The record gives the reactivity of an RNA of 177 nucleotides to DMS and 2A3. DMS adducts were read by reverse transcription with MarathonRT. Values cover nucleotides 27 to 126.

RNA sequence: GGGAACGACUCGAGUAGAGUCGAAAAUAUGCUUAACGUCGAUCUGAUUAGAACGAGCGCUGGAAGCGAACGAUACCGCCCCAGGCAUUGUCUUCAGCAACGGUGUCUUUCCACUCGCCACCAAAUAAGGUAGGGUAUAGUUCGCUAUACCCUACCUAAAAGAAACAACAACAACAAC
Reactivity to DMS in 0.01 (KOAc 150mM, MgCl2 10mM, bicine 150mM(pH8.5), 24C), signal-to-noise 2, nucleotides 027 to 126: u020a090u020g000c020u000u000a080a090c140g010u000c000g010a100u000c020u020g020a120u010u000a080g030a030a100c080g020a060g020c040g010c030u000g000g020a070a120g000c070g010a080a040c060g010a080u000a090c070c030g010c040c030c030c040a040g000g000c030a070u000u020g000u010c040u010u000c100a070g010c080a050a060c080g000g000u000g000u000c040u000u010u000c010c010a070c050u000c070g000c040c030a090c070c070a010a070a070u040a120
Reactivity to 2A3 in 0.01 (KOAc 150mM, MgCl2 10mM, bicine 150mM(pH8.5), 24C), signal-to-noise 1, nucleotides 027 to 126: u090a020u050g020c010u070u050a100a000c000g070u020c050g060a100u020c010u020g110a260u080u230a060g040a080a020c050g000a060g090c030g030c100u010g090g040a070a010g020c010g020a030a010c030g040a050u040a100c000c030g010c000c000c010c000a010g020g010c000a050u000u120g060u080c020u040u050c040a060g000c000a010a070c040g030g020u000g020u000c000u000u030u030c020c000a030c010u040c020g030c000c010a060c010c040a050a030a060u180a130